[RMDB]
RNA sequence: GGGAACGACUCGAGUAGAGUCGAAAAUCGUCGCUACCGUCAUCACCGACCUUUUCCGGUGAGCUAGGAUCUUCCCGCGAAGGCGGAGGUGAUGCUGGCAAUCUAGGCAAAGAGGUAUUGUUGAUAGGAACCUCUGUGUAGACGUCCGCUUCAGGGGGGUGGUUGGAUAAUUCGUUAUCCAACCACCAAAAGAAACAACAACAACAAC
Reactivity to 2A3 in 0.01 (KOAc 150mM, MgCl2 10mM, bicine 150mM(pH8.5), 24C), signal-to-noise 2, nucleotides 027 to 156: u110c010g040u030c050g020c060u090a030c050c000g050u050c000a070u030c010a000c020c040g170a300c010c020u100u110u090u150c060c000g020g050u060g020a020g000c030u060a040g020g160a130u020c000u040u000c090c020c030g000c040g050a010a030g080g030c040g000g000a020g070g050u040g040a030u070g040c030u010g000g000c000a000a070u030c000u060a060g100g000c090a070a130a020g090a040g020g050u170a110u220u160g050u050u070g060a130u080a090g000g050a040a020c000c000u000c010u030g030u030g020u080a020g040a070c000g070u030c030c050g020c090u080u060c040a070g000g020g000g020